[RMDB]
The record gives the reactivity of an RNA of 177 nucleotides to DMS and 2A3. The RNA was probed in 150 mM KOAc, 10 mM MgCl2 and 150 mM bicine (pH 8.5) at 24 C.
RNA sequence: GGGAACGACUCGAGUAGAGUCGAAAAGAUGAGUCUCCUCGCAUGAGAAUGUGAGGUACAUGACGUACUGACUACGUUAUGUAUGGUGUAUGGAAACAUACACCAAGACUCAUGGUAGUCAGUAUAAGGUAGUGCUAGAUUUCGAUCUAGCGCUACCAAAAGAAACAACAACAACAAC
Reactivity to DMS in 0.01 (KOAc 150mM, MgCl2 10mM, bicine 150mM(pH8.5), 24C), signal-to-noise 4, nucleotides 027 to 126: g010a020u000g000a000g010u000c000u000c010c010u000c000g020c010a010u010g010a220g000a200a010u000g020u000g010a010g000g010u000a010c010a000u010g000a000c010g000u000a100c010u000g000a030c010u000a030c000g010u010u000a010u000g000u000a000u000g000g000u000g000u000a000u000g000g000a150a130a230c010a000u000a010c000a000c000c000a000a010g010a010c010u000c000a000u000g000g010u000a010g010u000c000a000g010u040a100u030a110a130
Reactivity to 2A3 in 0.01 (KOAc 150mM, MgCl2 10mM, bicine 150mM(pH8.5), 24C), signal-to-noise 8, nucleotides 027 to 126: g050a010u010g000a000g000u010c000u000c000c000u000c000g010c000a010u020g060a030g070a280a020u010g010u000g000a000g000g000u000a000c000a000u010g010a000c010g010u040a110c010u000g000a000c000u010a000c010g010u020u020a000u000g000u000a000u000g000g000u000g000u000a000u000g010g020a040a040a010c000a000u000a000c000a000c000c000a000a000g000a000c000u000c000a000u000g020g020u010a000g000u000c010a000g030u020a100u040a070a040